[RMDB]
RNA sequence: GGGAACGACUCGAGUAGAGUCGAAAACGAGUGCAAUAAAGACGCGGUUGCCGAACGGUAUGGAUGCCACCGUGACGGCUCAAUCACACAAGUGCCAACGAUAACGAGGCGCUCGCUAUUGCUGCGUAAAAGCGACGAUCGUUCGCGAUCGUCGCAAUCUUCUAACGUUGUUCGCAACGUUAGAAGAAAAAGAAACAACAACAACAAC
Reactivity to DMS in 0.01 (KOAc 150mM, MgCl2 10mM, bicine 150mM(pH8.5), 24C), signal-to-noise 2, nucleotides 027 to 156: c020g030a080g030u000g020c060a120a110u000a040a090a160g030a040c010g010c010g030g020u000u000g010c000c020g000a080a020c000g010g010u000a110u000g020g010a140u000g030c050c060a090c010c010g000u000g010a190c010g020g040c000u010c040a060a080u000c040a080c070a080c050a080a140g050u000g000c010c020a070a130c080g000a130u000a080a120c060g000a200g020g010c000g020c000u000c000g010c040u000a110u000u010g010c010u000g010c000g030u000a100a070a070a160g020c000g020a020c000g000a020u000c000g060u000u000c290g000c050g000a020u000c000g040u000c000g000c040a000a020
Reactivity to 2A3 in 0.01 (KOAc 150mM, MgCl2 10mM, bicine 150mM(pH8.5), 24C), signal-to-noise 4, nucleotides 027 to 156: c040g020a030g080u110g020c040a040a080u050a130a160a020g060a030c030g000c010g010g030u070u050g000c000c000g000a010a000c020g010g030u080a080u150g090g080a130u150g110c040c010a000c010c000g020u010g110a160c020g010g010c010u010c020a020a040u100c000a010c010a010c010a100a030g020u020g020c000c010a120a070c120g100a140u170a250a080c070g030a100g020g010c020g000c010u010c030g010c020u050a040u070u140g000c020u050g020c010g020u040a050a040a060a100g000c000g000a010c000g000a000u010c000g010u080u030c140g000c020g120a000u000c000g000u010c000g010c000a000a000
The record gives the reactivity of an RNA of 207 nucleotides to DMS and 2A3. It was measured as part of the RMDB library M2RFPK. DMS adducts were read by reverse transcription with MarathonRT. For 2A3, 2,890 sequencing reads were counted. For 2A3 the reverse transcriptase was SuperScript II with manganese.